[RMDB]
The record gives the reactivity of an RNA of 207 nucleotides to 2A3. The reactions ran in a buffer of 150 mM KOAc, 10 mM MgCl2 and 150 mM bicine (pH 8.5), at 24 C. The data come from the RNA Mapping Database (RMDB), library VIROID.
RNA sequence: GGGAACGACUCGAGUAGAGUCGAAAAGGAGAGGGCGGACGGUCCUGAGAACUCUUAUCUUCCUGCUUAGAAGAGGAGUCUCCUGGACGUAUCCGCCCGCUCGGGAUGGGCCUCAGUGCCGACGAGGAGUCCGCAGGUGGGAGGAUCAGCCACCGGAGAAAUAAGCUUUCUUCGGAAAGCUUAUUUCAAAAGAAACAACAACAACAAC
Reactivity to 2A3 in 0.01 (KOAc 150mM, MgCl2 10mM, bicine 150mM(pH8.5), 24C), signal-to-noise 2, nucleotides 027 to 156: g120g010a020g080a020g020g000g000c010g000g040a040c110g030g090u030c010c000u030g020a080g000a110a050c000u000c010u080u180a070u110c010u060u020c030c110u210g200c170u210u250a030g010a000a000g000a010g010g000a010g000u000c020u020c040c040u000g010g000a000c050g030u120a060u020c000c000g000c010c010c000g000c000u000c000g020g020g010a070u080g040g030g030c000c040u080c050a070g020u080g230c010c020g020a020c030g010a020g050g020a020g050u040c050c030g030c090a060g050g000u030g040g000g020a070g060g000a070u080c030a010g030c040c000a030c010c010g000g010a080

For 2A3, 1,186 sequencing reads were counted.